Chemical mapping of a 207-nucleotide RNA with DMS and 2A3. 2A3 adducts were read by reverse transcription with SuperScript II with manganese. The data come from the RNA Mapping Database (RMDB), library OK3TST. Reactivities are rounded to 0.1 and cut off at 0 and 3. For DMS the reverse transcriptase was MarathonRT. For DMS, 3,457 sequencing reads were counted. The reactions ran in a buffer of 150 mM KOAc, 10 mM MgCl2 and 150 mM bicine (pH 8.5), at 24 C.

RNA sequence: GGGAACGACUCGAGUAGAGUCGAAAAGGCAUUAUGAGGGAGCUGAGAUUUUCAGGAGGUCCCCAGGGCCUGAACCAAGGCAGAGGCCAGUCUGGUUUUCAUUUCGGUCUCAGGAAGAAUGUUCUAACAGGUGCUCAGAGAUGGAAUGGGCUGUUUACACCAUCAUUAGGUUCGCCUAAUGAUGGUGAAAAGAAACAACAACAACAAC
Reactivity to DMS in 0.01 (KOAc 150mM, MgCl2 10mM, bicine 150mM(pH8.5), 24C), signal-to-noise 2, nucleotides 027 to 156: g000g030c020a080u000u000a090u000g010a140g010g030g020a130g010c000u010g030a130g010a180u000u010u010u000c070a070g010g030a200g060g010u000c010c000c030c040a110g000g030g010c000c000u010g000a110a100c050c040a100a080g000g000c050a100g000a040g010g050c020c030a090g040u010c090u010g000g010u000u000u030u020c020a100u000u000u000c060g010g020u020c020u000c040a120g000g000a090a100g000a070a110u000g010u000u000c030u000a100a120c040a090g000g000u000g000c010u000c030a150g000a140g020a140u000g000g010a070a130u000g000g010g030c000u000g000u000u000u010a180
Reactivity to 2A3 in 0.01 (KOAc 150mM, MgCl2 10mM, bicine 150mM(pH8.5), 24C), signal-to-noise 2, nucleotides 027 to 156: g080g000c050a080u060u120a110u300g010a160g020g000g020a010g000c020u040g010a060g150a300u120u180u070u120c040a040g030g000a020g030g180u050c000c010c000c020a010g030g000g020c000c010u010g000a020a020c030c010a050a090g020g070c010a030g010a040g120g020c010c000a010g020u010c030u090g070g020u040u030u020u160c080a090u010u050u080c100g040g000u030c020u000c000a030g060g020a060a040g030a070a050u150g000u110u100c020u020a100a000c010a050g010g130u100g020c000u020c030a020g000a000g020a090u080g010g070a040a080u050g040g000g000c050u020g010u000u010u030a030